The record gives the reactivity of an RNA of 177 nucleotides to DMS and 2A3. For DMS, 1,405 sequencing reads were counted. The reactions ran in a buffer of 150 mM KOAc, 10 mM MgCl2 and 150 mM bicine (pH 8.5), at 24 C.
RNA sequence: GGGAACGACUCGAGUAGAGUCGAAAAGAUAUGGACCAGAGUGGCAACAGCGUGUGUGUCGGAAACGACACCACGACAUGCGCUGGUCCUAAGUCAAAACCGACCUAGGGUUCGCCCUAGGUCGGAACGGACAAACUAACUUCGGUUAGUUUGUCCGAAAAGAAACAACAACAACAAC
Reactivity to DMS in 0.01 (KOAc 150mM, MgCl2 10mM, bicine 150mM(pH8.5), 24C), signal-to-noise 1, nucleotides 027 to 126: g020a020u000a150u000g050g000a020c000c010a020g000a030g000u000g020g000c050a120a300c200a120g030c000g010u010g000u010g040u000g010u000c000g020g010a060a100a040c000g020a010c000a000c000c000a040c000g000a040c130a060u000g000c000g000c000u000g000g000u000c000c000u000a000a030g010u010c010a070a060a120a140c000c000g010a010c000c000u000a000g000g000g010u000u000c210g000c000c000c000u010a010g000g020u000c010g000g000a000a020
Reactivity to 2A3 in 0.01 (KOAc 150mM, MgCl2 10mM, bicine 150mM(pH8.5), 24C), signal-to-noise 1, nucleotides 027 to 126: g000a020u030a010u060g000g010a000c000c000a000g020a020g090u300g160g000c040a110a070c150a300g070c020g000u040g010u010g020u000g010u010c010g000g000a020a040a010c000g000a000c010a000c000c010a000c000g020a120c020a070u040g000c020g000c020u010g000g000u000c010c000u010a010a000g000u020c020a040a000a090a150c000c010g000a010c020c000u010a000g040g060g010u040u050c230g110c000c000c030u010a000g000g000u000c000g000g000a000a000

For DMS the reverse transcriptase was MarathonRT. For 2A3, 3,166 sequencing reads were counted. Reactivities are given for positions 27 through 126. The data come from the RNA Mapping Database (RMDB), library TTRDEL.